[RMDB]
RNA sequence: GGGAACGACUCGAGUAGAGUCGAAAAGCUAUAUGUUCGCAUAUAGCAAAAAAGAUAUGGAUCCUUGAUCUUUUGACGAAUCAUCUGGUCGGAAACGACCAGGUUCGAUAAGAUUUGAGGAUCCUAAGUCAAAAACAGCGAACUUCGGUUCGCUGAACAUAGUAGCGUAGUUCGCUACGCUACUAUGAAAAGAAACAACAACAACAAC
Reactivity to 2A3 in 0.01 (KOAc 150mM, MgCl2 10mM, bicine 150mM(pH8.5), 24C), signal-to-noise 6, nucleotides 027 to 156: g000c000u010a000u010a000u000g030u050u160c290g010c100a000u010a000u020a020g000c020a000a030a030a050a000a030g020a010u040a010u040g000g000a000u000c000c000u000u010g000a010u010c020u070u150u110u200g200a130c080g050a050a030u050c040a030u030c080u020g010g000u000c000g020g020a070a060a050c010g000a000c010c000a000g000g010u010u010c010g000a010u030a160a090g010a030u060u190u300g020a010g000g000a000u000c000c000u000a000a000g000u000c010a020a030a020a130a130c000a000g010c000g000a000a000c000u050u080c180g120g000u000u000c000g000c000u000g000a000a000
Reactivity to DMS in 0.01 (KOAc 150mM, MgCl2 10mM, bicine 150mM(pH8.5), 24C), signal-to-noise 3, nucleotides 027 to 156: g010c010u000a010u000a000u010g000u000u010c300g040c020a030u000a000u000a020g010c010a010a020a080a090a090a080g020a100u000a210u000g010g000a010u000c000c020u000u010g010a020u000c010u000u000u010u000g020a300c160g000a080a060u010c100a100u010c050u000g020g050u000c000g040g000a130a110a240c000g010a020c010c000a020g010g010u000u000c020g030a130u000a000a040g020a040u000u000u010g040a030g020g010a010u000c000c000u000a010a050g010u010c050a050a090a100a120a140c020a030g010c010g020a030a030c010u000u010c290g030g010u000u000c000g040c000u000g000a020a110
The record gives the reactivity of an RNA of 207 nucleotides to 2A3 and DMS. It was measured as part of the RMDB library RNAMAK. For 2A3 the reverse transcriptase was SuperScript II with manganese. The RNA was probed in 150 mM KOAc, 10 mM MgCl2 and 150 mM bicine (pH 8.5) at 24 C. DMS adducts were read by reverse transcription with MarathonRT.